[RMDB]
RNA sequence: GGGAACGACUCGAGUAGAGUCGAAAACAAAACAAACACAGCCAACUUAACCAGCAUGCUAACAGUUGAAAGACUUGAACCAACAAUAGGUGAUGUUGAUCAGUUAAGAAAUAACAAACAAAACAAAGUAGUCGUACGUCUUCGGACGUACGACUACAAAAGAAACAACAACAACAAC
Reactivity to 2A3 in 0.01 (KOAc 150mM, MgCl2 10mM, bicine 150mM(pH8.5), 24C), signal-to-noise 1, nucleotides 027 to 126: c000a000a110a000a000c130a000a020a000c000a020c000a110g110c240c000a050a000c050u000u000a000a000c000c000a000g000c000a000u000g030c020u060a050a090c050a080g000u000u000g270a170a130a000g080a050c130u050u110g080a280a120c020c000a030a030c060a070a000u000a060g000g000u190g300a000u050g000u020u000g000a030u020c000a080g080u060u100a000a000g110a050a020a000u070a130a050c080a050a060a000c260a050a300a000a000c140a010a010a000
Source: RMDB library OK1LIB, as collected in RNAgym. Structure probing data (2A3) for a 177-nucleotide construct. For 2A3, 431 sequencing reads were counted. The reactions ran in a buffer of 150 mM KOAc, 10 mM MgCl2 and 150 mM bicine (pH 8.5), at 24 C.